The record gives the reactivity of an RNA of 177 nucleotides to DMS and 2A3.
Source: RMDB libraries RFM100 and RFMREP, as collected in RNAgym.
The reactions ran in a buffer of 150 mM KOAc, 10 mM MgCl2 and 150 mM bicine (pH 8.5), at 24 C.
For 2A3 the reverse transcriptase was SuperScript II with manganese.
DMS adducts were read by reverse transcription with MarathonRT.
RNA sequence: GGGAACGACUCGAGUAGAGUCGAAAAUGGCACAUUUGUUAAGUUUUCAAAUGGGCCUAACUCUGCCACAUAUAUAAUAUCGGAGAUGGCAAAGGCUUGUGACGGAGAUAUCUCUCUUAAGCCUUUCCCUUCUAAUAUUGUUCGCAAUAUUAGAAGGAAAAGAAACAACAACAACAAC
Reactivity to DMS in 0.01 (KOAc 150mM, MgCl2 10mM, bicine 150mM(pH8.5), 24C), signal-to-noise 9, nucleotides 027 to 126: u010g010g010c000a020c000a010u000u000u000g010u000u010a100a170g030u020u010u010u000c000a000a010a010u000g000g000g010c000c000u010a050a060c040u000c020u010g010c010c020a030c070a090u010a100u020a090u020a100a100u020a090u010c150g000g010a120g010a120u000g000g000c050a060a050a030g010g010c030u000u000g010u010g020a060c200g010g010a030g000a120u020a090u010c070u000c130u000c040u010u010a030a050g010c010c000u000u000u010c070
Reactivity to 2A3 in 0.01 (KOAc 150mM, MgCl2 10mM, bicine 150mM(pH8.5), 24C), signal-to-noise 9, nucleotides 027 to 126: u040g000g000c000a000c010a010u000u010u010g050u040u110a270a270g080u130u100u090u070c000a000a000a000u000g000g010g000c000c000u010a050a030c010u010c030u030g030c020c010a020c030a010u110a000u050a010u050a170a170u100a090u180c100g120g000a100g030a130u030g030g000c010a050a020a000g010g000c010u040u030g040u070g080a070c100g070g010a020g020a050u160a200u140c060u000c000u000c000u060u080a020a010g000c000c000u000u020u020c000